[RMDB]
RNA sequence: GGGAACGACUCGAGUAGAGUCGAAAAACGCUCAGCCCCUGACACGCUCGGCUCUGCGCGCCUGAGACCAGCACCGAGAGGAGACAGCGGUGAGCGCGGCAAAGGCCACUCGGCGCGGGCAGGGGAGAGCCGAGGAUAACUUCGGUUAUCCUCGGCUAAAAGAAACAACAACAACAAC
Reactivity to DMS in 0.01 (KOAc 150mM, MgCl2 10mM, bicine 150mM(pH8.5), 24C), signal-to-noise 2, nucleotides 027 to 126: a050c240g000c050u030c020a300g000c010c000c000c000u000g030a080c080a090c050g060c000u020c120g000g000c000u010c080u020g000c080g000c060g000c070c020u000g020a220g000a080c060c110a080g020c000a150c000c000g000a120g000a190g000g000a100g040a170c080a140g010c010g000g000u000g000a050g000c050g040c000g000g020c030a070a100a180g000g000c000c000a160c160u030c190g000g000c020g000c000g020g010g000c000a020g010g000g030g000a070g000
Reactivity to 2A3 in 0.01 (KOAc 150mM, MgCl2 10mM, bicine 150mM(pH8.5), 24C), signal-to-noise 4, nucleotides 027 to 126: a010c070g050c030u040c030a130g070c000c000c000c000u000g010a010c010a010c040g030c050u060c040g030g010c000u000c040u110g060c040g000c010g000c000c020u120g090a090g090a140c030c030a040g020c010a030c010c020g080a060g000a060g070g040a050g040a040c120a050g030c030g010g040u030g070a070g020c060g000c000g040g000c020a080a100a070g000g000c000c010a040c060u070c050g000g000c020g000c020g020g090g030c000a000g040g000g000g010a010g040
This 177-nucleotide RNA was probed chemically with DMS and 2A3. The reactions ran in a buffer of 150 mM KOAc, 10 mM MgCl2 and 150 mM bicine (pH 8.5), at 24 C. It was measured as part of the RMDB library RFM100. For 2A3 the reverse transcriptase was SuperScript II with manganese.